[RMDB]
RNA sequence: GGGAACGACUCGAGUAGAGUCGAAAACAGUGAUGGAAACAUCACUGAAAAACCGGAAACGGACAUGACGAGCGCGCGCAUGUCGGGAAACCGUAAACGCGAAAAGAGCUAGCGAAAGCUAGCUCAACGACGUAUACCAGUUCGCUGGUAUACGUCGAAAAGAAACAACAACAACAAC
Reactivity to DMS in 0.01 (KOAc 150mM, MgCl2 10mM, bicine 150mM(pH8.5), 24C), signal-to-noise 2, nucleotides 027 to 126: c000a000g010u000g000a000u000g000g000a230a160a300c020a000u000c000a020c000u000g000a010a090a120a070a160c000c030g030g000a080a110a070c040g000g000a000c000a000u020g030a220c000g000a230g000c040g040c000g010c040g000c050a050u000g000u040c000g000g000g020a050a120a190c300c000g000u020a040a150a010c000g000c000g020a200a000a060a060g000a000g040c060u000a000g000c000g000a100a110a180g000c010u000a010g030c000u000c000a020a010
Reactivity to 2A3 in 0.01 (KOAc 150mM, MgCl2 10mM, bicine 150mM(pH8.5), 24C), signal-to-noise 4, nucleotides 027 to 126: c000a000g000u000g000a010u000g000g010a020a050a020c000a010u000c000a000c000u000g010a030a000a000a010a010c040c010g060g060a140a120a020c060g100g000a000c010a020u040g110a110c010g020a020g090c020g010c000g010c010g000c000a000u020g000u010c020g020g040g040a100a030a000c020c000g010u080a080a110a050c030g020c030g040a070a040a000a060g010a000g000c000u000a000g010c000g080a110a020a000g000c000u010a000g000c000u000c000a000a000
Source: RMDB library OK1LIB, as collected in RNAgym. This 177-nucleotide RNA was probed chemically with DMS and 2A3. The RNA was probed in 150 mM KOAc, 10 mM MgCl2 and 150 mM bicine (pH 8.5) at 24 C. Values are in units of 0.01, from 0 to 300, in steps of 10. For 2A3 the reverse transcriptase was SuperScript II with manganese.